[RMDB]
RNA sequence: GGGAACGACUCGAGUAGAGUCGAAAAGAUAUGGACGUCCGGGAAGAGGUACACGAUUCUCGGAAACGAGGGUGUACUACCCACCUUCCGGGACGUCCUAAGUCAAAGCCCAACUUCGGUUGGGCAACACAAGACUUGAGUUCGCUCAAGUCUUGUGAAAAGAAACAACAACAACAAC
Reactivity to DMS in 0.01 (KOAc 150mM, MgCl2 10mM, bicine 150mM(pH8.5), 24C), signal-to-noise 3, nucleotides 027 to 126: g000a040u000a300u010g000g010a010c010g020u010c010c000g000g020g020a010a010g000a140g020g020u000a010c010a020c040g020a170u000u010c010u000c000g000g000a040a040a090c000g010a010g000g010g000u000g010u000a010c020u010a060c050c060c130a300c130c000u000u000c010c000g020g000g010a020c020g000u010c000c000u000a000a050g000u000c010a100a100a110g010c000c000c000a000a010c000u000u040c130g040g010u000u000g000g000g000c000a010a010
Reactivity to 2A3 in 0.01 (KOAc 150mM, MgCl2 10mM, bicine 150mM(pH8.5), 24C), signal-to-noise 2, nucleotides 027 to 126: g010a010u060a060u100g000g000a020c020g010u000c040c090g170g010g000a020a000g100a070g120g000u030a000c020a000c030g280a300u300u080c010u000c000g000g000a000a020a000c010g000a000g030g110g000u010g000u010a010c020u050a050c030c060c040a080c020c000u010u000c010c010g050g000g000a000c000g000u000c000c000u000a010a010g010u000c030a050a060a060g000c000c000c000a010a000c010u090u080c260g110g000u000u000g000g000g000c000a020a010